The record gives the reactivity of an RNA of 177 nucleotides to 2A3 and DMS. Values cover nucleotides 27 to 126. Reactivities are rounded to 0.1 and cut off at 0 and 3. For 2A3, 2,062 sequencing reads were counted.
[RMDB]
RNA sequence: GGGAACGACUCGAGUAGAGUCGAAAACGCUCAAUGCCGCGGGUCCUUCCGUAGAGAGUGGCCAUGAGUUCCAAGGAGAUGGAAGACACAGAGAGCCUAAGCGUGGAAGACAUUUCCGGCAGCGAGGUCUUUAGACCUCCUUCGGGAGGUCUAAAGAAAAAGAAACAACAACAACAAC
Reactivity to 2A3 in 0.01 (KOAc 150mM, MgCl2 10mM, bicine 150mM(pH8.5), 24C), signal-to-noise 2, nucleotides 027 to 126: c050g020c000u000c010a010a050u020g000c000c000g060c150g060g020g020u090c020c010u000u040c000c010g050u120a030g030a010g010a030g150u110g030g000c020c010a070u050g040a040g100u000u040c010c010a080a050g190g050a210g090a050u050g010g010a030a030g100a070c040a010c010a090g230a020g010a020g100c000c020u060a100a010g060c010g050u060g030g010a000a000g010a010c010a060u110u160u130c050c000g000g000c000a000g010c010g020a000g000g000
Reactivity to DMS in 0.01 (KOAc 150mM, MgCl2 10mM, bicine 150mM(pH8.5), 24C), signal-to-noise 4, nucleotides 027 to 126: c090g010c010u000c020a040a300u000g000c010c010g020c200g000g010g000u000c050c040u000u000c010c020g020u000a090g010a120g010a080g020u010g000g000c010c020a140u000g000a140g000u000u000c020c000a050a170g020g010a130g010a140u010g000g000a050a040g010a130c090a080c040a030g000a160g000a180g030c010c010u000a100a150g000c050g020u010g000g010a040a020g000a040c040a060u000u000u010c120c010g020g000c030a020g000c300g000a030g030g010